Structure probing data (2A3) for a 207-nucleotide construct.

RNA sequence: GGGAACGACUCGAGUAGAGUCGAAAACGAUCAGUACGUUCGCGUACUGAUCGAAGCUACUGGAGACAGUAGCAAGUCUAAGACCUUGUUAGGGGGAAACAAGGAAAAAUGGAGGAAGGGCGGACCUCCAUACUUAGACAACCUCCAACCGCCCAAAAAUUAGGAGUAGCUUCGGCUACUCCUAAUUAAAAGAAACAACAACAACAAC
Reactivity to 2A3 in 0.01 (KOAc 150mM, MgCl2 10mM, bicine 150mM(pH8.5), 24C), signal-to-noise 1, nucleotides 027 to 156: c010g000a000u000c000a000g000u000a000c000g020u020u060c200g000c000g110u000a000c000u000g000a000u000c000g000a000a000g000c000u010a000c000u000g020g020a040g020a020c000a010g000u000a000g000c000a010a000g000u000c000u000a010a020g030a140c000c000u010u010g000u050u160a300g000g000g010g000g050a020a040a030c030a030a020g000g000a080a140a040a020a000u050g010g000a000g030g000a070a270g000g020g000c010g020g000a160c010c000u000c000c010a010u000a040c000u000u010a000g000a010c010a000a120c020c030u040c010c000a010a030c010c000g020c000c000c000a040a040a000

For 2A3, 1,272 sequencing reads were counted. The RNA was probed in 150 mM KOAc, 10 mM MgCl2 and 150 mM bicine (pH 8.5) at 24 C. Source: RMDB library OK3TST, as collected in RNAgym. For 2A3 the reverse transcriptase was SuperScript II with manganese.